[RMDB]
This 207-nucleotide RNA was probed chemically with 2A3. The data come from the RNA Mapping Database (RMDB), library M2RFPK. The RNA was probed in 150 mM KOAc, 10 mM MgCl2 and 150 mM bicine (pH 8.5) at 24 C.
RNA sequence: GGGAACGACUCGAGUAGAGUCGAAAACAUUACGAAUUCAGUCGCAAAUUGUAGAAUUAGCUACUCUACGAUUUAGUGAGCGUUAGAAACGUUGUAAUAUAAUAUAGUCUUUGGAAGGAUUAUAUUGGAGCCGCGGACAAGUUCGCUUGUCCGCGAAGCGCUCUAAUAACUUCGGUUAUUAGAGCGCAAAAGAAACAACAACAACAAC
Reactivity to 2A3 in 0.01 (KOAc 150mM, MgCl2 10mM, bicine 150mM(pH8.5), 24C), signal-to-noise 1, nucleotides 027 to 156: c050a100u130u220a060c090g040a170a040u160u160c050a040g060u030c060g020c030a000a000a010u020u000g000u000a000g020a020a020u040u040a020g000c000u060a020c000u000c000u020a010c000g020a020u000u010u100a060g000u030g070a060g050c030g000u050u260a090g070a020a030a020c030g000u000u090g020u030a120a120u100a090u010a170a010u020a000u000a050g000u000c050u000u080u190g200g000a090a080g010g000a010u020u000a010u010a000u020u000g030g060a110g100c080c040g020c010g000g000a000c010a010a010g010u050u080c050g020c140u000u010g000u000c040c000g000c000g000a000a000